[RMDB]
RNA sequence: GGGAACGACUCGAGUAGAGUCGAAAAGCCGCGGGCCGGUGCUCGGCUCGUUGGGCCAUGCAGCGGCGGCCGCCGCGGAGCUGCGAGCGGCGGUAGCGCCCCCUGUGAGAAGGCCCGAGAUGCCCCUCUUUUUCGGAUAGUUCGCUAUCCGAAAAAGAAAAGAAACAACAACAACAAC
Reactivity to DMS in 0.01 (KOAc 150mM, MgCl2 10mM, bicine 150mM(pH8.5), 24C), signal-to-noise 2, nucleotides 027 to 126: g050c100c060g040c030g000g000g020c010c020g000g000u020g000c150u080c020g050g000c000u000c030g060u000u000g010g000g070c000c020a100u090g000c000a020g040c300g020g000c030g010g030c000c000g000c010c000g020c000g000g000a110g000c040u010g000c030g010a170g030c010g000g000c000g000g020u000a080g000c030g000c030c010c020c050c030u000g000u000g040a150g010a120a040g000g000c000c010c010g000a080g000a180u030g070c060c000c020c260u010
Reactivity to 2A3 in 0.01 (KOAc 150mM, MgCl2 10mM, bicine 150mM(pH8.5), 24C), signal-to-noise 3, nucleotides 027 to 126: g040c020c000g000c000g000g000g000c000c010g030g040u210g170c140u190c130g010g010c000u000c000g020u010u020g000g000g000c000c000a070u190g000c000a010g020c000g020g000c010g020g030c000c000g000c000c010g010c020g010g030a080g040c090u150g050c070g070a060g000c000g000g000c040g020g010u060a070g150c000g000c020c000c000c010c010u000g010u050g040a130g040a220a120g010g000c000c000c000g000a020g000a000u080g030c000c000c020c000u000